[RMDB]
RNA sequence: GGGAACGACUCGAGUAGAGUCGAAAAGGCGGCUAGUUCGCUAGCCGCCAAACUGCACAGUCGCCAGCCAAGUGCACAAAAUAAAAGAAAAGGUAGGCGACAAAAGAGGGGCGUUCGCGCCCCUCAACAAUAGGUGUAGCUUCGGCUACACCUAUUGAAAAGAAACAACAACAACAAC
Reactivity to DMS in 0.01 (KOAc 150mM, MgCl2 10mM, bicine 150mM(pH8.5), 24C), signal-to-noise 1, nucleotides 027 to 126: g000g040c000g000g020c000u010a010g020u000u030c190g020c000u000a010g030c000c000g060c000c000a000a030a030c120u000g000c000a030c020a080g030u000c010g000c000c010a300g030c020c020a090a020g000u000g000c040a080c140a010a080a060a120u000a090a100a150a070g040a080a070a060a030g000g000u000a140g000g000c010g000a000c020a010a010a030a110g000a010g040g000g010g000c000g020u000u000c170g020c000g000c010c000c000c000u000c010a010a050
Reactivity to 2A3 in 0.01 (KOAc 150mM, MgCl2 10mM, bicine 150mM(pH8.5), 24C), signal-to-noise 2, nucleotides 027 to 126: g040g000c000g000g040c020u000a020g010u030u070c080g020c110u000a020g020c000c000g040c000c000a000a000a000c000u010g020c020a010c000a050g000u000c000g010c010c000a020g010c050c030a150a020g040u050g110c040a020c040a070a180a040a010u250a080a170a020a010g170a010a120a000a000g010g000u070a080g040g000c020g000a020c050a000a080a010a010g010a010g010g010g010g000c020g020u030u070c190g000c000g000c040c000c010c000u000c000a000a000